[RMDB]
RNA sequence: GGGAACGACUCGAGUAGAGUCGAAAAGCACGUCGUUACGACGACGUGCAAGAAAACAAAAGGAGUGGCGACGUCUGGCCACAGUGAAUCAAACAGGCGAAAAGCAUGGUGGUACGCCACCAUGCAAGUGAGCGUCCAGUUUCGACUGGACGCUCACAAAAGAAACAACAACAACAAC
Reactivity to 2A3 in 0.01 (KOAc 150mM, MgCl2 10mM, bicine 150mM(pH8.5), 24C), signal-to-noise 1, nucleotides 027 to 126: g000c000a000c000g000u050c020g010u000u110a020c300g060a000c000g000a000c000g040u000g000c000a000a000g000a000a180a000a000c300a000a020a000a010g200g130a300g080u040g000g010c000g050a120c000g030u000c000u000g000g010c000c000a000c000a010g000u060g030a000a120u120c020a090a020a020c050a020g000g000c000g070a030a120a020a000g000c000a000u040g000g000u020g010g010u050a040c060g010c000c000a000c000c000a000u000g000c000a000a010
Structure probing data (2A3) for a 177-nucleotide construct. The 2A3 profile rests on 732 reads. The reactions ran in a buffer of 150 mM KOAc, 10 mM MgCl2 and 150 mM bicine (pH 8.5), at 24 C.